[RMDB]
RNA sequence: GGGAACGACUCGAGUAGAGUCGAAAAGAUGGGAAGAGCGGGCGGUGAGUGCCUCAUUAUAUAAGCCUUGCCAGCACGGCAGUCUCAGAUCUCCAUUCAGCCUUUGCUGGAGUGGAUGGUGGUGGGGUCAUAGUUUUCUUCUGUGGGGUUUGCCUGGUGGUAUAUACAGAUUCGUCUGUAUAUACCAAAAAGAAACAACAACAACAAC
Reactivity to DMS in 0.01 (KOAc 150mM, MgCl2 10mM, bicine 150mM(pH8.5), 24C), signal-to-noise 2, nucleotides 027 to 156: g010a090u010g000g020g000a100a060g000a140g060c060g040g020g030c050g000g020u010g010a070g020u010g020c020c020u000c070a100u000u000a150u000a130u000a060a080g010c000c050u010u000g010c010c000a170g030c050a090c150g020g080c030a110g010u000c050u030c040a100g000a100u010c010u000c020c010a110u000u000c010a090g000c010c170u000u000u020g030c030u010g030g010a050g020u000g040g010a070u010g000g020u020g000g020u000g010g030g020g010u000c040a060u000a070g020u010u010u010u000c060u000u000c040u000g030u030g000g020g030g010u000u020u010g000c050c010u000g030g020
Reactivity to 2A3 in 0.01 (KOAc 150mM, MgCl2 10mM, bicine 150mM(pH8.5), 24C), signal-to-noise 2, nucleotides 027 to 156: g030a020u060g000g000g030a070a020g020a040g070c080g000g000g010c050g000g020u040g030a060g020u190g020c010c020u020c030a050u100u180a100u060a090u070a180a040g010c000c010u000u030g010c000c020a050g010c030a010c040g040g000c030a020g040u030c020u000c080a060g040a180u060c030u010c060c000a020u050u050c020a000g030c020c060u170u300u300g030c040u010g020g030a020g050u060g000g000a030u070g060g000u050g030g080u030g030g000g010g010u000c030a050u040a100g030u070u080u120u120c010u140u050c040u040g060u100g060g000g040g030u020u050u140g020c000c020u150g120g000